Description: An RNA of 177 nucleotides, treated with DMS and read out base by base. The reactions ran in a buffer of 150 mM KOAc, 10 mM MgCl2 and 150 mM bicine (pH 8.5), at 24 C.

[RMDB]
RNA sequence: GGGAACGACUCGAGUAGAGUCGAAAAGGACGAAAGUCUGACGGAGCAACGCCGCGUGAGCGAAGAAGGCCUUCGGGUCGUAAAGCUCUGUUGUUAGGGAAGAACAAGUACCGCAGUCACUGGCGGUUCUCGAUCAGGUUUUCGAACCUGAUCGAGAAAAAGAAACAACAACAACAAC
Reactivity to DMS in 0.01 (KOAc 150mM, MgCl2 10mM, bicine 150mM(pH8.5), 24C), signal-to-noise 2, nucleotides 027 to 126: g060g000a040c020g010a090a090a110g020u000c000u020g020a080c050g010g000a060g010c050a060a060c170g000c040c000g000c090g000u000g000a080g030c020g020a080a110g000a170a300g010g010c000c020u010u020c180g050g000g010u000c000g000u000a010a080a300g000c000u000c000u000g020u000u000g050u010u000a060g000g020g000a050a070g000a070a100c100a050a070g000u020a080c000c010g020c000a020g000u020c170a050c220u050g000g010c000g000g000u000
Reactivities are given for positions 27 through 126.
For DMS the reverse transcriptase was MarathonRT.